[RMDB]
RNA sequence: GGGAACGACUCGAGUAGAGUCGAAAAUAUCGAAGUCGGCGCUAUUGAAUACCCGUGUAUGGCGUUGCUGACACGGACGUGCACUGCCAUGUCGGGCGGUGUAUCAAGCCCUAGCGUGGGCUAGAAAAGUCUCAGGUGGUUUCGACCAUCUGGGGCUAAAAGAAACAACAACAACAAC
Reactivity to DMS in 0.01 (KOAc 150mM, MgCl2 10mM, bicine 150mM(pH8.5), 24C), signal-to-noise 2, nucleotides 027 to 126: u030a050u000c050g010a070a070g030u000c030g000g010c010g000c020u000a030u010u000g000a090a080u020a080c150c000c000g030u000g000u000a050u040g000g020c030g010u030u060g000c000u010g010a060c010a030c000g000g000a270c300g000u000g000c000a000c000u000g000c000c000a300u090g000u080c300g000g000g000c000g000g010u010g010u020a000u020c070a070a060g000c020c010c020u000a020g000c040g050u000g000g020g010c010u000a050g000a020a050a080
Reactivity to 2A3 in 0.01 (KOAc 150mM, MgCl2 10mM, bicine 150mM(pH8.5), 24C), signal-to-noise 5, nucleotides 027 to 126: u240a040u040c030g050a050a000g010u000c000g100g000c000g000c010u010a030u030u120g060a090a050u100a160c010c000c020g010u000g000u020a300u070g020g010c120g120u060u280g010c010u010g010a000c000a000c000g010g010a000c030g000u000g000c000a000c010u000g000c000c000a150u300g270u300c080g000g000g000c000g000g000u000g000u010a010u060c020a020a020g020c010c000c000u000a010g010c000g030u130g070g010g000c000u010a010g060a020a090a000